[RMDB]
RNA sequence: GGGAACGACUCGAGUAGAGUCGAAAAAACACCUUGUACUCGUCCGUCGCCUGCGAGCCCCAGUAAUAGCCGCGCUCGCGCGGAUUGCGCGUGUACGGGAAAUCGAAGUACAGGUAAUCGGGCAGCACGUAUAUUAUCAGUUCGCUGAUAAUAUACGAAAAGAAACAACAACAACAAC
Reactivity to 2A3 in 0.01 (KOAc 150mM, MgCl2 10mM, bicine 150mM(pH8.5), 24C), signal-to-noise 7, nucleotides 027 to 126: a000a000c100a040c010c000u040u090g040u030a040c020u010c050g030u000c020c000g020u020c060g030c010c020u030g010c020g030a090g020c020c010c010c010a030g040u120a050a130u070a140g080c020c010g000c010g000c020u040c050g040c000g000c020g030g060a120u080u180g010c020g000c010g020u040g020u050a020c010g000g000g040a120a090a020u130c040g040a090a000g020u060a040c000a000g000g020u030a020a060u090c020g010g000g030c010a020g020c030a020
Reactivity to DMS in 0.01 (KOAc 150mM, MgCl2 10mM, bicine 150mM(pH8.5), 24C), signal-to-noise 9, nucleotides 027 to 126: a070a060c150a090c030c010u010u010g030u000a030c030u000c060g020u000c030c010g010u000c090g010c040c030u000g010c020g010a100g010c040c010c020c040a180g010u000a070a070u000a140g020c010c010g010c030g010c040u000c170g010c010g010c010g010g010a100u010u000g010c030g020c200g010u000g000u010a020c020g000g000g000a050a100a070u010c030g010a070a050g010u010a050c010a020g010g000u000a080a080u010c060g010g000g010c040a070g010c100a160